[RMDB]
RNA sequence: GGGAACGACUCGAGUAGAGUCGAAAAGGACGUUCUCUCGGCUUUGUUCGGCCUGGCUCGCAUCGACCUUGCCGGGCGAGCUACCGCGAGCUUGCUCAUUGACCGGUAAAGUGUCAUCCGGCGAAUCGAGUCCAUGAAGGUUCGCCUUCAUGGACUCAAAAGAAACAACAACAACAAC
Reactivity to 2A3 in 0.01 (KOAc 150mM, MgCl2 10mM, bicine 150mM(pH8.5), 24C), signal-to-noise 1, nucleotides 027 to 126: g040g040a030c050g080u120u040c040u000c010u020c010g140g000c110u000u050u160g120u030u120c000g080g020c010c010u000g030g030c020u000c000g000c040a070u060c080g100a120c070c000u010u040g010c000c000g000g000g000c010g000a000g000c000u020a050c000c010g070c010g030a020g030c000u030u000g020c000u060c040a200u070u180g050a120c010c020g000g070u070a100a080a010g170u180g090u120c010a030u000c010c000g000g000c050g040a020a020u100c060
Background: Structure probing data (2A3) for a 177-nucleotide construct. For 2A3 the reverse transcriptase was SuperScript II with manganese. It was measured as part of the RMDB library OK1LIB. The RNA was probed in 150 mM KOAc, 10 mM MgCl2 and 150 mM bicine (pH 8.5) at 24 C.